[RMDB]
RNA sequence: GGGAACGACUCGAGUAGAGUCGAAAAGGCGAUUGAGAGGCCCUCUCAUUAAUGCGGAGAUGUCACGCUGACAGAAUGAUAUUAGAUGUCCGCUUCCGGUUACAUCGCGGCGAUGAUUACAUAGGACAUCGAUUACCCAUUCGCUUCGGGGAAGCAAAUCCUGCUAUAGUUUCGACUAUAGCAGGAUAAAAGAAACAACAACAACAAC
Reactivity to DMS in 0.01 (KOAc 150mM, MgCl2 10mM, bicine 150mM(pH8.5), 24C), signal-to-noise 4, nucleotides 027 to 156: g010g010c010g020a090u000u000g010a110g010a160g030g010c040c070c050u000c040u000c020a140u010u000a060a090u010g020c060g010g020a100g010a080u000g020u010c030a090c060g000c050u000g000a120c080a110g010a060a060u010g010a110u000a060u000u000a140g010a080u000g020u000c020c030g010c110u000u010c060c090g010g030u000u000a080c060a060u000c030g020c070g020g030c090g040a060u000g000a170u000u010a090c080a130u000a090g020g010a040c010a050u000c010g010a110u000u000a070c040c000c020a130u000u000c070g010c050u000u000c060g010g010g030g020a070a070g020c050a060a130
Reactivity to 2A3 in 0.01 (KOAc 150mM, MgCl2 10mM, bicine 150mM(pH8.5), 24C), signal-to-noise 6, nucleotides 027 to 156: g040g000c020g040a080u060u110g060a090g030a050g120g070c020c040c000u020c010u010c010a060u090u170a160a070u120g020c050g020g030a070g000a030u060g040u070c030a020c080g000c060u060g040a050c020a050g090a050a060u060g040a020u040a050u150u100a050g000a040u010g010u010c000c000g010c000u080u050c050c020g050g000u050u040a040c030a030u040c050g020c050g160g040c050g060a040u060g010a040u060u170a060c070a070u130a070g010g010a000c000a000u010c010g000a000u020u080a030c010c010c020a040u050u050c020g010c020u030u050c050g040g000g000g030a000a020g000c000a090a090
An RNA of 207 nucleotides, treated with DMS and 2A3 and read out base by base. The reactions ran in a buffer of 150 mM KOAc, 10 mM MgCl2 and 150 mM bicine (pH 8.5), at 24 C. It was measured as part of the RMDB library OK3TST. The DMS profile rests on 9,891 reads.